[RMDB]
RNA sequence: GGGAACGACUCGAGUAGAGUCGAAAAACUGACGGUACGCCGUCAGAACGGUAGAAAAGAUGGUUUGAAAACCACGCCUUCUACCAAUAUAGUAAAUAAAUAGGCGGAGCGGUCAUACGUGACCGCACUUCUUCCUGCAUUUCGAUGCAGGAAGAAGAAAAGAAACAACAACAACAAC
Reactivity to DMS in 0.01 (KOAc 150mM, MgCl2 10mM, bicine 150mM(pH8.5), 24C), signal-to-noise 3, nucleotides 027 to 126: a100c010u000g000a030c000g000g000u000a090c210g060c010c000g000u000c000a000g010a030a080c150g010g050u000a010g010a000a000a010a000g030a150u000g000g000u000u000u010g010a070a040a130a050c000c010a020c030g000c010c000u010u000c000u000a000c000c000a120a100u000a070u070a180g040u040a090a020a050u010a010a060a170u030a020g000g000c010g000g000a140g000c000g000g000u000c000a030u020a090c220g020u000g000a000c000c010g000c000a000
Reactivity to 2A3 in 0.01 (KOAc 150mM, MgCl2 10mM, bicine 150mM(pH8.5), 24C), signal-to-noise 8, nucleotides 027 to 126: a000c000u000g000a000c010g000g000u050a040c230g050c050c000g000u000c000a000g000a030a000c040g000g000u010a000g010a010a010a000a010g070a300u020g020g050u040u100u250g150a120a110a000a000c000c000a000c000g000c000c000u000u000c000u000a000c000c000a010a000u140a010u030a020g180u110a010a040a120u120a030a080a040u130a020g010g000c010g010g020a020g000c010g000g000u000c000a020u020a110c240g070u030g000a000c000c000g000c000a000
This 177-nucleotide RNA was probed chemically with DMS and 2A3. High DMS reactivity at an A or C suggests that its Watson-Crick edge is free.